Background: Source: RMDB library RFM100, as collected in RNAgym. This 177-nucleotide RNA was probed chemically with DMS and 2A3. Values cover nucleotides 27 to 126. For 2A3, 2,101 sequencing reads were counted.
RNA sequence: GGGAACGACUCGAGUAGAGUCGAAAAUUGCGCCUCCGAUUCGCCGUCGGCAUUUCCCCAGCAGCCAUGACCUACCAGGCUGCGGUGCGGCUCGCCGCACAGGUCAUCCCUCAUCGGGCGCGUCCUGGUCAUGAUGCGGAUUCGUCCGCAUCAUGACAAAAGAAACAACAACAACAAC
Reactivity to DMS in 0.01 (KOAc 150mM, MgCl2 10mM, bicine 150mM(pH8.5), 24C), signal-to-noise 1, nucleotides 027 to 126: u010u050g030c030g070c060c040u030c010c080g020a120u000u000c140g000c060c020g000u010c020g000g000c140a100u040u000u000c030c000c010c140a270g010c120a050g060c020c010a040u000g010a040c020c110u020a170c140c180a030g000g000c030u000g060c010g010g070u000g000c080g000g060c090u010c290g010c020c000g110c000a050c040a000g000g020u020c060a010u030c060c020c000u020c080a180u010c060g020g010g020c000g000c070g030u000c080c000u030g030
Reactivity to 2A3 in 0.01 (KOAc 150mM, MgCl2 10mM, bicine 150mM(pH8.5), 24C), signal-to-noise 3, nucleotides 027 to 126: u100u070g000c000g030c000c010u070c020c020g060a110u070u040c010g000c010c010g040u020c000g020g020c020a030u020u060u020c000c020c010c040a010g010c000a000g010c000c010a100u120g020a050c020c010u150a210c050c110a020g000g000c000u010g000c000g000g000u050g000c000g010g000c050u030c100g060c010c010g020c000a010c000a010g010g040u020c020a060u070c010c000c000u070c010a040u110c070g030g010g000c000g000c010g020u020c020c030u050g030